[RMDB]
RNA sequence: GGGAACGACUCGAGUAGAGUCGAAAAUGGGUUGUACGUAUUCAUACUUCGUUAUAAUGGACAUCCGGAAGAAUGGACCUAUACACUCAUAUCAACAGGAGCUAAAUUUUUGAAUGUGAUUAGGGAUCUGACACGCCCACGUCUUGGUAGUCAUCAAGUAAUUUAUAUGGUUCGCCAUAUAAAUUACAAAAGAAACAACAACAACAAC
Reactivity to 2A3 in 0.01 (KOAc 150mM, MgCl2 10mM, bicine 150mM(pH8.5), 24C), signal-to-noise 5, nucleotides 027 to 156: u070g030g000g000u030u050g020u070a030c040g010u070a120u050u110c030a020u040a170c030u020u010c030g060u090u140a140u060a200a180u160g030g000a030c030a090u030c050c050g070g010a040a020g010a030a060u060g020g020a020c010c000u060a070u040a120c040a010c020u040c030a040u060a050u160c050a040a080c040a080g060g070a040g030c030u100a060a070a160u140u220u070u120u190g140a100a050u100g010u020g040a050u040u050a040g010g020g000a020u030c040u030g010a010c000a010c070g020c000c010c010a040c030g020u010c030u040u030g060g010u010a040g030u030c030a020u040c010a090a110
Reactivity to DMS in 0.01 (KOAc 150mM, MgCl2 10mM, bicine 150mM(pH8.5), 24C), signal-to-noise 3, nucleotides 027 to 156: u000g020g010g050u000u010g040u010a050c030g020u000a130u000u000c040a080u000a090c020u000u000c050g030u000u030a110u000a110a110u010g000g010a250c080a060u000c030c040g020g020a090a090g020a120a080u000g010g000a060c030c070u010a110u000a050c050a050c010u000c010a040u000a170u000c070a060a120c060a120g010g020a060g020c040u010a070a080a170u000u000u010u000u010g020a040a080u000g010u020g010a100u000u000a080g030g000g010a050u000c030u000g010a100c040a070c090g000c010c010c000a040c100g000u010c050u010u000g010g000u000a070g020u010c050a110u000c050a090a300

The data come from the RNA Mapping Database (RMDB), library OK3TST. Structure probing data (2A3 and DMS) for a 207-nucleotide construct. The DMS profile rests on 5,085 reads. The reactions ran in a buffer of 150 mM KOAc, 10 mM MgCl2 and 150 mM bicine (pH 8.5), at 24 C. Reactivities are given for positions 27 through 156. DMS adducts were read by reverse transcription with MarathonRT.